RNA sequence: GGGAACGACUCGAGUAGAGUCGAAAACGCUGCGAGCCAGUCGGUCACGUACCGAAGCCCUUCCGAGGGGCAUCCCUGUUGGAGUCGUUUCCGGCCCCCGCCGGACUCGGUUUCAUCUUUGGUCUCCAUCUCACUGUGUCUUCGGACACAGUGAGAUAAAAGAAACAACAACAACAAC
Reactivity to 2A3 in 0.01 (KOAc 150mM, MgCl2 10mM, bicine 150mM(pH8.5), 24C), signal-to-noise 3, nucleotides 027 to 126: c060g020c040u060g000c010g030a020g040c020c000a030g070u030c020g010g010u030c050a030c270g060u100a030c030c000g000a050a010g020c010c000c000u070u050c100c120g060a160g000g010g010g000c010a020u020c000c010c000u040g010u030u040g010g010a000g020u000c000g000u000u000u000c000c000g020g000c010c020c010c000c070g000c000c000g020g020a020c010u010c010g000g020u020u020u020c010a030u010c000u060u060u100g060g010u030c020u000c060c020
Reactivity to DMS in 0.01 (KOAc 150mM, MgCl2 10mM, bicine 150mM(pH8.5), 24C), signal-to-noise 2, nucleotides 027 to 126: c090g020c050u010g000c080g000a110g000c010c060a170g000u030c000g030g000u010c030a130c180g000u040a020c040c000g000a100a100g010c030c010c000u000u000c110c100g000a160g040g010g010g030c000a120u000c030c020c020u010g000u000u000g060g000a060g010u020c000g000u000u000u000c000c000g000g010c020c030c090c070c260g000c030c000g000g000a040c030u000c030g000g000u000u000u000c040a070u010c050u010u000u030g000g000u000c000u020c060c160